[RMDB]
RNA sequence: GGGAACGACUCGAGUAGAGUCGAAAAAUAACAGGCUGAUCCCUCCCAAGAGCUCACAUCGACGGAGUGGUUUGGCACCUCGAUGUCGGCUCGUCACAUCCUGGGGCUGGAGAAGGUCCCAAGGGUUACGUGUGAGUCGUUUCGACGACUCACACGUAAAAGAAACAACAACAACAAC
Reactivity to 2A3 in 0.01 (KOAc 150mM, MgCl2 10mM, bicine 150mM(pH8.5), 24C), signal-to-noise 1, nucleotides 027 to 126: a000u190a010a020c100a000g120g000c000u110g040a000u010c000c010c000u020c100c000c000a050a060g020a000g000c000u000c000a020c000a120u000c000g000a040c200g070g000a230g070u080g000g140u110u270u270g110g000c000a010c020c020u000c000g000a010u000g050u030c070g050g000c000u020c090g000u000c010a100c000a040u010c000c000u060g000g000g000g030c000u000g080g060a300g140a090a000g060g060u000c020c000c000a020a060g000g000g000u000u000

About this RNA: An RNA of 177 nucleotides, treated with 2A3 and read out base by base. The RNA was probed in 150 mM KOAc, 10 mM MgCl2 and 150 mM bicine (pH 8.5) at 24 C. For 2A3 the reverse transcriptase was SuperScript II with manganese. Reactivities are given for positions 27 through 126.